[RMDB]
RNA sequence: GGGAACGACUCGAGUAGAGUCGAAAAUAAAUGGGCAAUCCUGAGCCAAAUCCUUCUUUCCGAAAACAAAAAACUAAAAGUUCAGAAAAAAAGGAUAGGUGCAGAGACUCAAUGGAAGCUAUUCUAAGUAAUAGGCUCAUUUCGAUGAGCCUAUUACAAAAGAAACAACAACAACAAC
Reactivity to 2A3 in 0.01 (KOAc 150mM, MgCl2 10mM, bicine 150mM(pH8.5), 24C), signal-to-noise 1, nucleotides 027 to 126: u060a030a060a050u080g000g000g020c040a090a030u060c000c030u000g000a000g000c000c000a030a050a120u010c020c000u000u000c000u060u000u000c010c020g080a140a120a120a020c140a050a100a040a020a100a210c090u260a050a000a120a040g000u000u000c030a040g100a090a040a000a000a000a000a000g020g000a030u000a020g000g030u010g000c000a000g050a050g040a110c000u020c000a000a120u120g030g050a080a020g000c020u050a010u120u000c010u030a070a070
Reactivity to DMS in 0.01 (KOAc 150mM, MgCl2 10mM, bicine 150mM(pH8.5), 24C), signal-to-noise 2, nucleotides 027 to 126: u020a060a060a140u010g010g040g000c020a110a070u040c020c010u000g000a300g050c020c030a000a130a140u010c000c060u000u020c090u000u000u000c020c020g000a090a020a090a020c030a000a020a080a070a010a180c300u020a040a050a140a120g020u000u000c020a140g000a000a000a030a040a170a000a000g000g000a000u000a070g000g010u080g000c040a000g000a190g020a020c010u000c030a020a070u040g020g020a020a150g010c090u020a060u000u000c010u020a040a250
Conditions: 150 mM KOAc, 10 mM MgCl2 and 150 mM bicine (pH 8.5), 24 C. Chemical mapping of a 177-nucleotide RNA with 2A3 and DMS. It was measured as part of the RMDB library RFM100.